[RMDB]
RNA sequence: GGGAACGACUCGAGUAGAGUCGAAAAUGUAUCAAGGCGCUGGCCACACGCUUAACUGUUGAUACGAACAUACGAGCUUCUCAAAAUUCCAUGCCCACAAGACGUAUGUGAAAGUAACACGGGGCCAAGCCGUGCUAAUGUUCGCAUUAGCACGGCUAAAAGAAACAACAACAACAAC
Reactivity to DMS in 0.01 (KOAc 150mM, MgCl2 10mM, bicine 150mM(pH8.5), 24C), signal-to-noise 2, nucleotides 027 to 126: u010g060u050a010u000c030a030a030g030g000c030g000c090u050g000g010c030c000a000c110a300c060g010c000u000u020a100a110c170u000g020u010u040g000a070u010a000c000g000a210a110c020a000u010a000c000g000a150g010c030u020u000c050u000c000a010a000a010a160u000u000c040c070a100u050g040c070c010c000a080c250a060a020g000a000c000g000u000a000u000g010u000g000a050a080a060g050u040a040a010c150a000c180g050g010g010g000c020c010a110
Reactivity to 2A3 in 0.01 (KOAc 150mM, MgCl2 10mM, bicine 150mM(pH8.5), 24C), signal-to-noise 3, nucleotides 027 to 126: u140g010u010a010u010c010a000a020g020g030c040g000c130u120g090g010c030c000a150c000a000c080g030c040u130u180a170a070c070u130g060u180u040g060a000u000a020c050g010a050a000c010a000u040a010c020g020a090g090c030u090u020c080u000c030a090a080a000a020u110u130c030c010a040u100g000c010c010c010a070c010a030a000g050a010c010g010u010a040u010g000u020g030a100a140a030g100u090a080a030c010a020c180g000g000g000g000c020c000a000
Source: RMDB library OK1LIB, as collected in RNAgym. An RNA of 177 nucleotides, treated with DMS and 2A3 and read out base by base. DMS adducts were read by reverse transcription with MarathonRT. The RNA was probed in 150 mM KOAc, 10 mM MgCl2 and 150 mM bicine (pH 8.5) at 24 C.